[RMDB]
Chemical mapping of a 207-nucleotide RNA with DMS and 2A3. The 2A3 profile rests on 478 reads. Source: RMDB library OK3TST, as collected in RNAgym. DMS adducts were read by reverse transcription with MarathonRT. Conditions: 150 mM KOAc, 10 mM MgCl2 and 150 mM bicine (pH 8.5), 24 C. For 2A3 the reverse transcriptase was SuperScript II with manganese.
RNA sequence: GGGAACGACUCGAGUAGAGUCGAAAAGCAUUGACGAAAUCGAUACGGCCUUUAUUGAUUCUUACAUUGAAGACGAUAUGACUUGCUGGGGUUAAAAAGUGCUUUACAAGGGCGACAAUGUGAUUAUAAUGCUCACCAAUGAAACGAUAAGCGGAUAUAGUCCCAAUUGUUUCGACAAUUGGGACUAAAAAGAAACAACAACAACAAC
Reactivity to DMS in 0.01 (KOAc 150mM, MgCl2 10mM, bicine 150mM(pH8.5), 24C), signal-to-noise 1, nucleotides 027 to 156: g000c020a110u000u000g010a070c120g010a150a110a200u000c040g050a110u000a020c040g020g000c000c000u000u020u000a090u030u000g010a160u010u000c130u010u010a170c030a120u000u030g000a070a100g010a090c070g000a080u000a060u000g000a080c010u000u000g050c000u000g000g010g020g000u010u000a060a080a080a120a070g000u000g030c060u000u020u000a090c090a030a170g070g000g010c010g030a030c030a050a060u000g010u020g040a160u000u000a090u000a070a000u010g010c060u010c080a100c010c020a060a120u000g010a080a060a030c030g010a040u030a050a040g020c050g000g000a210u000a130
Reactivity to 2A3 in 0.01 (KOAc 150mM, MgCl2 10mM, bicine 150mM(pH8.5), 24C), signal-to-noise 1, nucleotides 027 to 156: g070c040a040u130u070g060a070c020g090a100a020a040u100c070g010a050u030a110c080g000g000c020c030u150u010u010a030u030u100g090a090u160u000c000u040u100a210c100a200u090u130g040a000a000g030a010c010g000a010u040a040u100g130a180c100u030u060g070c080u030g090g030g010g030u020u020a040a000a000a060a000g030u020g020c000u040u000u000a050c080a040a030g000g010g030c000g000a010c000a000a080u060g000u010g030a030u030u080a080u030a100a110u130g000c020u000c020a030c000c030a040a050u110g060a070a030a000c090g000a000u010a160a020g020c020g020g060a010u020a000